[RMDB]
RNA sequence: GGGAACGACUCGAGUAGAGUCGAAAAUCGAAGCACAUCUUCCUCAGAUUGUUCAAUCAGGGUUCAAUAUUCUGAUUGGAUUCUUGCAGGGUAUCGCUAACAACAUCGGUAGAGUAGUGACCGUUGCCGUAGAUAUCAUCGUCAACUUCUUGAACGGCAGUCUAAUCGUAUUCGUACGAUUAGACUGAAAAGAAACAACAACAACAAC
Reactivity to DMS in 0.01 (KOAc 150mM, MgCl2 10mM, bicine 150mM(pH8.5), 24C), signal-to-noise 3, nucleotides 027 to 156: u010c030g000a090a090g020c040a080c100a080u010c050u010u000c000c010u010c050a170g010a090u000u010g020u010u000c000a030a020u000c000a030g010g010g020u000u000c170a120a090u000a040u000u000c020u010g010a030u000u000g010g010a030u000u000c040u000u000g010c090a080g020g030g010u000a030u000c030g020c090u010a090a120c040a050a070c030a040u000c020g000g010u010a030g010a170g040u000a130g030u000g020a040c000c020g000u010u000g030c000c040g040u000a120g010a100u000a040u000c050a080u010c050g010u000c010a040a080c060u000u000c030u010u010g010a060a050c060g010g030
Reactivity to 2A3 in 0.01 (KOAc 150mM, MgCl2 10mM, bicine 150mM(pH8.5), 24C), signal-to-noise 9, nucleotides 027 to 156: u100c020g050a050a000g030c040a040c010a130u030c040u100u050c020c010u040c010a040g020a120u090u150g010u010u010c000a000a000u000c000a010g000g000g040u090u090c120a140a100u150a050u300u000c000u000g000a000u000u000g000g000a010u050u020c040u050u120g010c080a040g000g010g040u080a050u120c040g010c070u090a070a050c050a060a030c010a090u070c030g040g010u070a040g010a070g120u160a030g050u050g100a010c020c030g030u030u030g020c020c020g030u050a030g050a060u090a040u110c070a050u070c040g090u040c050a070a070c070u130u080c010u090u110g050a080a020c010g040g000